[RMDB]
An RNA of 207 nucleotides, treated with 2A3 and DMS and read out base by base. It was measured as part of the RMDB library OK3TST. For DMS the reverse transcriptase was MarathonRT. The DMS profile rests on 7,699 reads. The RNA was probed in 150 mM KOAc, 10 mM MgCl2 and 150 mM bicine (pH 8.5) at 24 C. In probing experiments dimethyl sulfate is read out at A N1 and C N3, which are open when not base-paired.
RNA sequence: GGGAACGACUCGAGUAGAGUCGAAAAGGCCGCGGUCACACCGAGGGCGACAUCGUGGCCUGGCUGCCCCGGCACAGGAUCCUGUUCGCCGGCGACCUCGUCGAGGCCCAGGCCGCCCUCUACACCGGCGAUGCCUUCCACCACGACUGGGCCGGGGAUUUAACGCAAUAUUCGUAUUGCGUUAAAUAAAAGAAACAACAACAACAAC
Reactivity to 2A3 in 0.01 (KOAc 150mM, MgCl2 10mM, bicine 150mM(pH8.5), 24C), signal-to-noise 4, nucleotides 027 to 156: g010g000c000c000g010c030g020g000u040c070a060c040a040c230c090g010a020g000g020g010c020g030a040c040a150u170c140g090u190g010g000c000c010u000g020g020c040u080g010c000c000c010c000g000g000c000a010c010a000g050g050a110u140c030c030u080g050u140u100c080g010c030c000g000g040c040g020a110c010c050u150c090g090u030c060g080a030g020g000c030c020c000a010g040g000c010c010g000c000c010c000u000c010u030a050c040a010c010c010g090g010c020g040a030u110g020c000c000u070u040c030c010a090c000c010a070c060g100a070c060u010g000g040g000c020c010g010g000g000g010
Reactivity to DMS in 0.01 (KOAc 150mM, MgCl2 10mM, bicine 150mM(pH8.5), 24C), signal-to-noise 2, nucleotides 027 to 156: g010g030c000c020g020c040g020g000u000c090a110c050a140c100c110g020a060g020g020g010c030g020a080c060a060u010c080g010u000g000g000c010c010u000g010g000c030u000g000c020c010c000c010g020g000c020a070c030a040g000g000a130u010c080c040u000g010u000u000c060g030c030c010g010g020c000g020a140c020c050u010c060g020u000c070g010a050g020g040c000c010c050a100g020g030c010c000g030c010c010c000u000c020u000a100c080a100c020c030g000g020c020g020a080u000g020c040c050u000u010c050c030a140c010c020a080c050g010a080c030u000g000g000g040c000c010g000g010g010g000